Record summary: Structure probing data (2A3) for a 177-nucleotide construct. Reactivities are given for positions 27 through 126.
[RMDB]
RNA sequence: GGGAACGACUCGAGUAGAGUCGAAAAACGUGGUUACGACCACGAAGUCAGAAACUCCUCACACACAUUUUUCUGAUAAUGCGAAGUACUCAAGCGAUCGUUUGAGUACUUUUUAUUUAACCUUGAACACCCCGUUAUGCUUCGGCAUAACGGGGUGAAAAGAAACAACAACAACAAC
Reactivity to 2A3 in 0.01 (KOAc 150mM, MgCl2 10mM, bicine 150mM(pH8.5), 24C), signal-to-noise 2, nucleotides 027 to 126: a000c010g000u010g000g000u100u170a030c140g020a000c010c000a000c000g000a050a100g030u020c000a000g010a080a010a030c020u000c000c050u170c000a020c000a020c030a030c050a120u060u030u000u000u000c060u020g000a010u090a190a090u140g000c070g040a000a120g000u000a040c040u000c000a030a000g000c000g300a300u300c300g020u000u000u000g000a000g000u000a000c000u000u020u000u000u000a000u000u060u060a000a000c010c000u080u050g050a060a000